[RMDB]
RNA sequence: GGGAACGACUCGAGUAGAGUCGAAAACACUGAUUCGUCAGUGCUUGCGGGGUCUCAGUGUUAGCUCGAAGAACAUGAACUACAGCUGAAGCCUCCACGGCUGCAUGGGAGAGCUAAUACUGAGACGGAGGCACCCCUAGUCAAUGUUCGCAUUGAAAAGAAUGAUAUGGUUCGCCAUAUCAUUCUUAAAAGAAACAACAACAACAAC
Reactivity to DMS in 0.01 (KOAc 150mM, MgCl2 10mM, bicine 150mM(pH8.5), 24C), signal-to-noise 3, nucleotides 027 to 156: c020a030c010u000g010a060u000u010c270g040u000c020a030g040u000g010c020u000u000g010c070g000g030g070g010u000c000u000c010a020g040u010g010u010u000a030g030c000u010c010g010a130a230g000a220a270c030a090u010g000a030a070c040u010a300c000a010g010c000u000g010a040a050g020c010c010u000c010c020a300c040g010g000c000u000g000c020a030u000g010g010g000a110g010a040g020c020u000a010a040u000a020c010u000g000a010g000a010c060g000g010a050g020g000c020a060c020c000c010c000u000a060g010u000c030a070a110u000g010u000u000c160g010c050a060u000u000g000a100a120
Reactivity to 2A3 in 0.01 (KOAc 150mM, MgCl2 10mM, bicine 150mM(pH8.5), 24C), signal-to-noise 5, nucleotides 027 to 156: c010a000c000u020g000a040u070u090c210g060u010c110a000g010u020g060c080u100u180g060c090g000g000g000g000u050c010u000c020a000g000u000g000u000u000a000g010c010u020c020g160a300a010g000a010a000c000a000u010g010a030a050c060u160a070c300a020g000c000u010g010a040a000g000c000c000u000c000c010a000c010g010g000c000u010g000c010a010u010g010g000g000a020g000a000g000c000u000a010a000u010a020c000u000g000a000g000a000c000g000g000a000g000g000c000a020c000c000c000c000u030a050g050u020c010a010a030u030g040u050u090c150g030c150a040u060u090g060a120a240

Conditions: 150 mM KOAc, 10 mM MgCl2 and 150 mM bicine (pH 8.5), 24 C. This 207-nucleotide RNA was probed chemically with DMS and 2A3. For DMS, 7,273 sequencing reads were counted. 2A3 adducts were read by reverse transcription with SuperScript II with manganese. The data come from the RNA Mapping Database (RMDB), library RNAMAK.